An RNA of 207 nucleotides, treated with 2A3 and read out base by base. For 2A3, 726 sequencing reads were counted. For 2A3 the reverse transcriptase was SuperScript II with manganese. The reactions ran in a buffer of 150 mM KOAc, 10 mM MgCl2 and 150 mM bicine (pH 8.5), at 24 C.
[RMDB]
RNA sequence: GGGAACGACUCGAGUAGAGUCGAAAAGCCCCAGGACUCUUAAAGAACCCAGAGUGGAGAUUCCCGGUCUCAUCCAGUGCAGGUGAGGGGGAAAGUGAUUUGUCCACAGUUACAUGGCUACCAUCAGCACACCUGGGUCAAGCUCGAUUCCACUCCAACAUCCAAUAGCGUUCGCGCUAUUGGAUGUAAAAGAAACAACAACAACAAC
Reactivity to 2A3 in 0.01 (KOAc 150mM, MgCl2 10mM, bicine 150mM(pH8.5), 24C), signal-to-noise 2, nucleotides 027 to 156: g030c010c000c020c000a000g030g030a050c000u020c020u070u210a180a180a160g040a110a080c090c060c060a050g040a010g070u040g020g020a050g000a120u020u010c000c000c000g150g090u010c020u000c010a030u000c010c010a050g090u040g250c090a030g040g040u010g000a000g010g050g000g000g000a030a010a160g100u080g040a130u100u060u180g100u060c030c000a050c010a110g050u040u090a080c070a130u130g000g000c020u050a110c090c060a090u050c080a010g040c030a000c000a000c020c000u010g020g010g000u010c020a040a000g000c000u020c040g000a030u030u000c010c000a060c030u040c020c040a040
Source: RMDB library OK3TST, as collected in RNAgym.